[RMDB]
RNA sequence: GGGAACGACUCGAGUAGAGUCGAAAAUGUGUCUCCUUCGGGAGACACAAACGCUCGCAGCCCGAGGCCGCACGGGCAUGGCAGCGGCCAGCCAGCGAGCUAUGUGUUAUCAAUUCGUUGAUAACAAAUCAAGAGACGAUUUCGAUCGUCUCUUGAUAAAAGAAACAACAACAACAAC
Reactivity to DMS in 0.01 (KOAc 150mM, MgCl2 10mM, bicine 150mM(pH8.5), 24C), signal-to-noise 2, nucleotides 027 to 126: u010g000u000g000u010c000u000c000c010u020u010c230g030g000g010a000g020a010c000a000c000a000a050a080c180g010c010u000c010g010c010a190g020c000c020c010g020a090g000g000c000c010g040c040a100c090g010g030g020c120a050u000g020g000c100a180g000c030g010g000c020c000a040g010c040c130a180g010c010g000a010g000c010u000a000u010g010u010g020u000u000a000u000c000a020a070u000u020c190g010u000u000g000a030u000a000a000c000a050a060
Reactivity to 2A3 in 0.01 (KOAc 150mM, MgCl2 10mM, bicine 150mM(pH8.5), 24C), signal-to-noise 1, nucleotides 027 to 126: u040g010u000g000u000c000u000c010c020u040u100c190g080g000g000a000g010a000c000a000c000a050a010a000c030g010c000u000c000g020c030a000g010c030c000c020g030a040g000g020c030c010g030c000a080c120g120g100g010c070a060u050g120g030c120a090g000c000g000g000c000c000a000g000c010c010a020g000c010g010a000g000c000u050a100u110g150u000g000u010u000a000u000c010a030a050u060u120c250g090u140u010g000a000u000a000a000c000a050a080
An RNA of 177 nucleotides, treated with DMS and 2A3 and read out base by base. Source: RMDB library M2PK50, as collected in RNAgym.